[RMDB]
RNA sequence: GGGAACGACUCGAGUAGAGUCGAAAACGUCUGAUCCUGCCUGAGGCCAAAGUCCAGGACAGUGGCGAGUUUGAGUGCAGGACAGAAGGGGUCUCGGCCUUCUUCGGCGUCACUGUCCAAGGUCAGGGAUCGACGAUAGUUUCGACUAUCGUCGAUCAAAAGAAACAACAACAACAAC
Reactivity to DMS in 0.01 (KOAc 150mM, MgCl2 10mM, bicine 150mM(pH8.5), 24C), signal-to-noise 3, nucleotides 027 to 126: c090g010u000c030u020g010a070u010c010c000u000g000c030c000u020g000a140g030g000c040c090a100a110a130g010u010c030c030a240g000g010a010c010a010g000u010g010g010c000g020a080g010u000u000u000g000a100g020u000g010c020a080g000g010a040c040a070g000a030a020g000g010g000g000u000c040u010c260g020g010c010c000u010u020c010u000u000c040g000g000c030g010u000c010a020c000u000g020u000c010c000a070a050g020g000u000c060a120g010g010
Reactivity to 2A3 in 0.01 (KOAc 150mM, MgCl2 10mM, bicine 150mM(pH8.5), 24C), signal-to-noise 2, nucleotides 027 to 126: c020g060u000c040u080g030a060u020c000c000u000g020c010c010u080g080a080g070g000c020c010a100a110a040g040u030c010c040a020g000g010a000c000a010g020u010g000g000c030g040a100g080u040u130u230g160a080g040u200g040c030a030g000g090a030c020a020g010a010a020g030g020g000g000u000c030u040c090g160g020c000c000u100u240c000u050u040c060g080g000c000g040u000c000a000c030u020g000u000c010c000a020a000g020g000u040c060a020g090g060